[RMDB]
RNA sequence: GGGAACGACUCGAGUAGAGUCGAAAAAAUGGUGCUUGAGAGGCAAAGCAUGUAAAUGUGACGCCACACACUUCGAGGCACAGUAUGUACUUGAUUCACGUCAUUAUAGAACUAUUCUCGAAGAUUGCCAAGGUCAAACUUUCGAGUUUGACCUUGGAAAAGAAACAACAACAACAAC
Reactivity to 2A3 in 0.01 (KOAc 150mM, MgCl2 10mM, bicine 150mM(pH8.5), 24C), signal-to-noise 2, nucleotides 027 to 126: a000a000u170g080g030u030g030c080u160u110g080a080g010a020g160g000c040a120a020a000g000c010a030u070g010u300a050a190a140u030g010u000g010a010c070g000c020c000a060c000a000c000a000c010u020u040c020g000a040g040g000c030a020c020a070g000u060a050u060g020u010a010c080u050u050g010a020u070u170c130a010c090g040u020c010a010u000u050a050u000a040g040a090a010c010u010a030u200u000c020u020c000g050a070a070g000a070u060u300g030
Reactivity to DMS in 0.01 (KOAc 150mM, MgCl2 10mM, bicine 150mM(pH8.5), 24C), signal-to-noise 2, nucleotides 027 to 126: a040a060u040g010g010u000g020c070u000u000g000a140g020a180g010g030c020a040a140a210g000c020a020u000g000u000a050a100a020u000g000u000g000a300c270g000c010c000a110c110a080c120a160c010u010u010c010g010a040g000g010c210a100c070a060g010u040a020u000g030u000a010c200u060u000g020a020u020u000c300a180c300g010u000c010a010u010u010a010u000a040g020a100a020c000u000a100u020u010c000u000c000g000a020a020g000a060u000u020g000